Annotation
Conditions: 150 mM KOAc, 10 mM MgCl2 and 150 mM bicine (pH 8.5), 24 C. This 177-nucleotide RNA was probed chemically with 2A3 and DMS. For 2A3 the reverse transcriptase was SuperScript II with manganese. Reactivities are given for positions 27 through 126.
[RMDB]
RNA sequence: GGGAACGACUCGAGUAGAGUCGAAAAGGGCGUCAUUUCGAUGACGCCCAUACGUCUACUCCGAUUGGCCAGGACGACGCCGACGGGCGCGUUUGCCAAUCGCACCGUCCAGAUUCGUCUGGACGAACAACUUUCAGAUGUUCGCAUCUGAAAGUUGAAAAGAAACAACAACAACAAC
Reactivity to 2A3 in 0.01 (KOAc 150mM, MgCl2 10mM, bicine 150mM(pH8.5), 24C), signal-to-noise 5, nucleotides 027 to 126: g000g000g000c020g010u010c010a020u040u080u170c250g080a020u000g000a000c000g000c000c000c000a000u010a000c010g050u000c000u000a010c000u000c010c010g000a000u010u010g030g000c050c070a110g120g010a030c030g110a210c010g020c010c010g240a300c220g090g010g000c010g010c000g010u010u020u090g000c000c000a000a010u010c000g000c010a060c030c030g000u000c010c000a000g000a030u040u060c080g090u030c090u000g000g020a000c000g000a000a020
Reactivity to DMS in 0.01 (KOAc 150mM, MgCl2 10mM, bicine 150mM(pH8.5), 24C), signal-to-noise 5, nucleotides 027 to 126: g000g000g000c000g010u000c000a020u010u000u030c200g030a020u000g010a030c010g010c010c000c000a000u000a010c290g010u010c010u000a020c000u000c010c010g000a020u000u000g000g010c070c300a100g000g010a010c010g000a130c010g040c010c000g000a140c300g000g010g020c010g020c010g000u010u000u010g010c000c010a020a010u000c010g010c100a080c180c010g020u000c000c010a010g000a030u000u010c170g010u000c000u000g000g000a000c010g010a040a080
Source: RMDB library M2PK50, as collected in RNAgym.